[RMDB]
An RNA of 207 nucleotides, treated with DMS and 2A3 and read out base by base. The RNA was probed in 150 mM KOAc, 10 mM MgCl2 and 150 mM bicine (pH 8.5) at 24 C. DMS adducts were read by reverse transcription with MarathonRT.
RNA sequence: GGGAACGACUCGAGUAGAGUCGAAAAGGAAUAGGAACAUUUUUGUUAUCAACGGCCACCUUUGCCUUAAUUCCGGAUGUUGUAAAAUUAUAACUAAACAGUCUAUCAUCGACACAAAUGAAAUUCUUGUUUAGACGUUUGUAGUUUACGUAUGCGGCAUCAUUCCCUGAUUCGUCAGGGAAUGAUGAAAAGAAACAACAACAACAAC
Reactivity to DMS in 0.01 (KOAc 150mM, MgCl2 10mM, bicine 150mM(pH8.5), 24C), signal-to-noise 1, nucleotides 027 to 156: g000g020a060a090u000a010g000g030a070a100c050a070u000u000u040u000u000g050u010u000a130u010c100a070a100c100g020g010c020c020a060c000c010u010u000u000g020c000c000u010u000a080a210u000u000c010c010g020g000a140u010g000u000u010g010u000a050a060a020a110u000u000a020u000a040a160c040u000a030a020a030c030a080g040u010c030u000a070u000c010a010u000c050g020a180c130a240c100a070a070a100u000g000a060a060a050u000u000c010u000u000g020u000u000u000a040g000a100c060g010u000u000u030g010u000a030g010u010u010u000a040c090g010u000a130u000g000c080g020g010
Reactivity to 2A3 in 0.01 (KOAc 150mM, MgCl2 10mM, bicine 150mM(pH8.5), 24C), signal-to-noise 2, nucleotides 027 to 156: g020g000a100a020u180a140g040g060a090a130c080a140u090u130u180u240u270g080u110u170a140u260c150a060a080c040g040g000c030c030a030c010c000u080u050u100g040c020c000u040u130a100a060u180u040c000c000g000g000a030u090g050u210u050g000u020a000a020a000a100u100u070a080u030a080a000c000u010a020a000a000c000a000g000u000c010u050a120u070c050a040u040c040g190a180c100a030c070a190a080a060u050g020a130a070a020u060u040c070u110u060g050u030u000u010a040g000a130c120g090u030u050u120g030u020a000g010u000u030u000a010c030g020u030a010u060g040c010g000g010